RNA sequence: GGGAACGACUCGAGUAGAGUCGAAAAGAUAUGGAAGGAACUACAAGCCGAAGUGGCGUUGAAAUCGGAAACGAUGGAGCCAUUAGGCUUGCCUUCCUAAGUCAAAAGCAUGGGUUCGCCCAUGCAAGACAGUGUUAGUGUUCGCACUAACACUGUCAAAAGAAACAACAACAACAAC
Reactivity to DMS in 0.01 (KOAc 150mM, MgCl2 10mM, bicine 150mM(pH8.5), 24C), signal-to-noise 3, nucleotides 027 to 126: g000a030u000a300u010g000g010a010a000g030g000a110a020c080u020a300c020a010a000g020c000c000g010a120a210g010u010g000g010c000g010u000u020g010a080a120a010u000c010g000g000a060a090a160c000g010a000u000g010g020a130g010c000c000a010u000u000a300g010g000c000u000u000g000c000c010u000u000c010c000u000a020a050g010u000c030a080a060a130a090g010c000a010u000g000g010g030u000u000c240g020c000c000c000a000u000g000c000a030a060
Reactivity to 2A3 in 0.01 (KOAc 150mM, MgCl2 10mM, bicine 150mM(pH8.5), 24C), signal-to-noise 2, nucleotides 027 to 126: g020a030u070a020u100g010g000a010a010g020g010a030a040c090u180a050c300a010a010g000c000c000g020a060a000g020u010g000g000c020g100u170u060g020a040a040a010u010c010g010g030a070a030a050c020g010a010u030g020g000a010g000c000c030a030u260u060a010g000g000c000u000u000g000c000c000u000u000c000c000u000a110a020g040u000c050a080a070a070a030g000c000a000u010g000g040g010u060u120c230g190c010c020c010a000u000g000c000a000a010